RNA sequence: GGGAACGACUCGAGUAGAGUCGAAAAGGUGCGUAUAAUUUAAGCGAGUAUGAAAUUAGCGUUCCGUGACCGGAACGACGGUCGCUUUUUCCGGUUUCGCUCUCACGGCAAUGACCACGCCCGCCACGCAUACCACCACUUUCGAGUGGUGGUAUGCAAAAGAAACAACAACAACAAC
Reactivity to DMS in 0.01 (KOAc 150mM, MgCl2 10mM, bicine 150mM(pH8.5), 24C), signal-to-noise 2, nucleotides 027 to 126: g020g020u000g000c060g000u020a080u000a030a030u040u040u000a050a050g000c000g020a030g020u080a120u010g020a100a040a150u000u010a000g000c010g030u000u010c010c010g000u010g080a090c260c080g000g000a040a050c090g010a020c000g020g000u000c160g030c020u000u000u030u030u000c010c010g060g020u000u020u000c030g040c030u000c060u000c000a020c090g000g000c080a050a020u020g020a190c100c010a130c020g010c000c050c090g020c130c040a170c200
Reactivity to 2A3 in 0.01 (KOAc 150mM, MgCl2 10mM, bicine 150mM(pH8.5), 24C), signal-to-noise 4, nucleotides 027 to 126: g030g010u090g020c020g030u050a060u050a300a160u110u170u090a080a010g030c050g040a020g070u130a100u210g120a060a090a080u130u100a040g000c020g020u170u000c010c010g010u060g050a060c210c000g020g010a040a030c050g090a010c000g030g000u030c040g000c000u090u070u010u020u000c020c000g020g000u020u020u040c050g000c020u000c000u030c040a040c070g030g000c080a080a150u100g030a040c000c000a020c050g020c000c010c000g020c020c020a050c060